An RNA of 177 nucleotides, treated with DMS and read out base by base.
It was measured as part of the RMDB library OK2TST.
The RNA was probed in 150 mM KOAc, 10 mM MgCl2 and 150 mM bicine (pH 8.5) at 24 C.

RNA sequence: GGGAACGACUCGAGUAGAGUCGAAAAAUUUUCUACAAUUAUAACCUCUCUAAAAUCUAGUGUGUCCAACAUCUCAGGUUCAUCAAAAUCUGAGUCAGAGAUAAUCACUCUCUUAAGAAACAUGAAAACGUAUGUCCUAAUUCGUUAGGACAUACGUAAAAGAAACAACAACAACAAC
Reactivity to DMS in 0.01 (KOAc 150mM, MgCl2 10mM, bicine 150mM(pH8.5), 24C), signal-to-noise 2, nucleotides 027 to 126: a070u010u000u010u000c040u040a100c070a080a060u000u010a090u000a160a140c040c010u000c080u000c020u000a060a040a140a090u000c010u010a100g010u000g020u000g040u000c010c030a070a110c140a100u000c010u000c000a010g000g000u000u000c100a090u010c270a110a130a030a010u000c040u000g030a030g010u000c160a020g000a060g020a030u020a070a090u010c140a030c160u000c030u000c020u000u000a120a100g030a080a020a020c120a030u000g020a070a010a060